[RMDB]
RNA sequence: GGGAACGACUCGAGUAGAGUCGAAAAGAUAUGGAUUUCGUAUCAUGCCGAUGAAAUCGGAAACGAUGGAGGCAUACGUGAUACGAGAAUCCUAAGUCAAAGACAGCGAUCUUCGGAUCGCUGUCAACAUCACGUUUAGGUUCGCCUAAACGUGAUGAAAAGAAACAACAACAACAAC
Reactivity to DMS in 0.01 (KOAc 150mM, MgCl2 10mM, bicine 150mM(pH8.5), 24C), signal-to-noise 4, nucleotides 027 to 126: g020a050u000a300u010g010g000a010u000u000u000c000g000u020a000u000c000a030u000g010c010c010g000a120u020g000a070a110a020u000c000g010g020a120a070a150c010g000a010u000g000g010a090g020g020c010a140u000a060c300g040u000g010a000u020a000c000g010a040g000a010a020u000c000c000u010a030a110g010u000c010a140a070a160g010a010c000a010g000c010g000a010u000c000u000u020c240g010g000a000u000c000g010c000u010g000u000c000a050a100
Reactivity to 2A3 in 0.01 (KOAc 150mM, MgCl2 10mM, bicine 150mM(pH8.5), 24C), signal-to-noise 3, nucleotides 027 to 126: g060a010u080a050u150g000g000a000u000u060u000c000g010u000a000u000c050a060u160g000c040c020g190a300u070g090a040a090a000u030c010g020g040a080a050a000c020g000a010u010g000g050a000g000g020c040a020u100a090c120g090u070g000a000u000a010c000g000a020g100a020a050u000c000c000u010a120a030g040u040c040a190a000a040g000a010c010a000g000c010g010a010u000c000u050u220c300g080g000a000u000c000g000c010u000g010u000c010a000a000